[RMDB]
Structure probing data (2A3 and DMS) for a 177-nucleotide construct. The 2A3 profile rests on 8,715 reads. The RNA was probed in 150 mM KOAc, 10 mM MgCl2 and 150 mM bicine (pH 8.5) at 24 C.
RNA sequence: GGGAACGACUCGAGUAGAGUCGAAAAAGACCCACCAAUCUUGGGUCAAGCUGGGCAACGAGACCCAAUGCGAUUGGGUCAGGCUGGGAAGCCAGACCCAACUUCUCAGCAGGACCCAAUAGCGUUGCAUUUCGUAAUUGUUCGCAAUUACGAAAUGAAAAGAAACAACAACAACAAC
Reactivity to 2A3 in 0.01 (KOAc 150mM, MgCl2 10mM, bicine 150mM(pH8.5), 24C), signal-to-noise 2, nucleotides 027 to 126: a000g060a030c010c000c000a020c020c040a090a170u130c060u080u070g000g000g000u020c010a010a010g080c060u110g000g040g020c050a100a050c080g020a030g050a090c000c010c040a000a010u050g000c000g020a020u020u000g000g000g000u000c000a000g050g000c000u010g010g000g000a010a000g030c060c030a030g060a130c000c010c000a010a000c000u010u000c000u000c000a010g000c000a000g030g010a000c020c000c050a000a000u020a010g000c000g040u030u070g000
Reactivity to DMS in 0.01 (KOAc 150mM, MgCl2 10mM, bicine 150mM(pH8.5), 24C), signal-to-noise 4, nucleotides 027 to 126: a120g000a120c010c010c010a070c190c100a090a060u020c140u010u010g030g000g020u000c010a070a080g010c080u010g000g000g000c070a080a080c060g010a180g000a090c040c030c000a030a020u010g010c030g000a050u000u000g000g000g010u000c000a000g010g010c000u000g000g010g000a010a010g010c070c040a110g000a110c030c010c010a050a090c010u000u000c000u000c000a010g000c010a020g000g000a030c000c000c000a010a000u000a030g000c010g020u010u000g000
About this RNA: For 2A3 the reverse transcriptase was SuperScript II with manganese. For DMS the reverse transcriptase was MarathonRT.